[RMDB]
RNA sequence: GGGAACGACUCGAGUAGAGUCGAAAAACACCGUGCAAAAAGCACGGAAGAGUCGUGCAAAGGACAGGCUCGACAGAUGCACGACAAAGCGAGCCAUGAAAAGAACAAAGGAAAACAACAAUAGAAACGACAAGUUCCACUUCGGUGGAGCUUGUCGAAAAGAAACAACAACAACAAC
Reactivity to DMS in 0.01 (KOAc 150mM, MgCl2 10mM, bicine 150mM(pH8.5), 24C), signal-to-noise 2, nucleotides 027 to 126: a160c090a250c000c030g040u000g000c000a040a150a070a110a130g010c000a000c030g000g000a010a110g020a160g000u000c000g040u000g030c000a020a150a090g020g000a050c040a080g000g000c010u000c050g000a060c160a030g020a210u010g000c000a030c000g000a000c050a010a000a040g000c100g000a050g030c000c000a070u000g000a000a050a040a050g050a060a070c210a030a060a070g020g000a070a020a030a040c200a060a150c190a040a160u000a100g060a020a100a180
Reactivity to 2A3 in 0.01 (KOAc 150mM, MgCl2 10mM, bicine 150mM(pH8.5), 24C), signal-to-noise 2, nucleotides 027 to 126: a000c050a050c010c010g010u000g000c030a000a010a060a240a090g040c000a010c000g010g050a020a000g050a020g010u030c010g010u000g000c030a090a210a050g080g020a050c070a040g080g000c010u030c040g040a030c040a040g120a040u120g020c000a000c000g000a010c010a000a010a060g100c000g030a000g000c000c010a010u130g060a010a060a000a100g060a060a010c100a050a050a040g120g070a090a140a000a040c080a040a000c010a030a070u110a160g100a060a130a020

This 177-nucleotide RNA was probed chemically with DMS and 2A3. As a SHAPE reagent, 2A3 marks flexible, mostly unpaired nucleotides at the ribose 2'-OH. DMS adducts were read by reverse transcription with MarathonRT. Source: RMDB library OK1LIB, as collected in RNAgym. The reactions ran in a buffer of 150 mM KOAc, 10 mM MgCl2 and 150 mM bicine (pH 8.5), at 24 C.